RNA sequence: GGGAACGACUCGAGUAGAGUCGAAAAAGGAGUAAUUUGUGGCAAAGAAGUUCUCGAUCAAGCGUGAUCCGACCUUUACCACGACUGUGAACCUGCCCGCACCUGGGCAGGCUCCGGUCCCGGUGAGCUUCACGUUUAAGUGGAUGGAUCGUGAGUCCCGACAGGGUGAAUUCGUUCACCCUGUCGGAAAAGAAACAACAACAACAAC
Reactivity to 2A3 in 0.01 (KOAc 150mM, MgCl2 10mM, bicine 150mM(pH8.5), 24C), signal-to-noise 1, nucleotides 027 to 156: a000g040g000a010g050u080a030a070u070u090u030g010u010g000g030c060a060a040a090g030a080a060g050u010u060c030u060c030g020a040u050c070a050a020g020c010g060u030g030a000u070c070c020g090a070c120c060u020u000u120a010c010c010a000c020g020a000c000u040g090u220g120a020a000c000c000u010g020c000c000c000g040c040a200c050c090u120g000g000g000c010a000g000g000c000u000c000c030g000g030u030c010c020c020g000g010u030g040a010g000c060u060u040c050a000c010g000u120u070u120a190a060g090u140g110g070a110u070g030g000a020u030c040g000u030g050a010g020u030c000